Description
Chemical mapping of a 207-nucleotide RNA with 2A3. The data come from the RNA Mapping Database (RMDB), library M2RFPK.

RNA sequence: GGGAACGACUCGAGUAGAGUCGAAAAAGUCAGUGGUCCGACUUACGAGUCGGACCACUCACAUGGCAGCUGGAUCCAGCCAGGCGGUGUAUCGCCAAACCCAGCCAAUCAAUCUACCCACCGGGAAUACAGAAAGCGAACUUCGGUUCGCUUUCAAGUGAUAGCAUAUGUUCGCAUAUGCUAUCACAAAAGAAACAACAACAACAAC
Reactivity to 2A3 in 0.01 (KOAc 150mM, MgCl2 10mM, bicine 150mM(pH8.5), 24C), signal-to-noise 2, nucleotides 027 to 156: a000g060u080c020a010g000u000g000g000u000c010c020g020a010c020u080u060a090c260g020a020g010u000c000g040g020a000c000c000a000c000u010c000a010c000a010u030g020g000c030a020g000c010u000g010g030a110u140c130c030a000g010c000c000a000g000g000c010g030g030u180g090u180a210u290c030g000c000c000a000a010a010c000c000c000a000g020c020c010a010a080u090c020a010a070u020c040u130a100c010c000c060a090c090c120g060g030g010a060a050u190a130c080a060g010a020a000a000g000c000g000a000a000c000u050u050c080g070g000u000u000c000g000c000u000u000u000c000a000a000

Notes:
As a SHAPE reagent, 2A3 marks flexible, mostly unpaired nucleotides at the ribose 2'-OH. The RNA was probed in 150 mM KOAc, 10 mM MgCl2 and 150 mM bicine (pH 8.5) at 24 C. Reactivities are rounded to 0.1 and cut off at 0 and 3.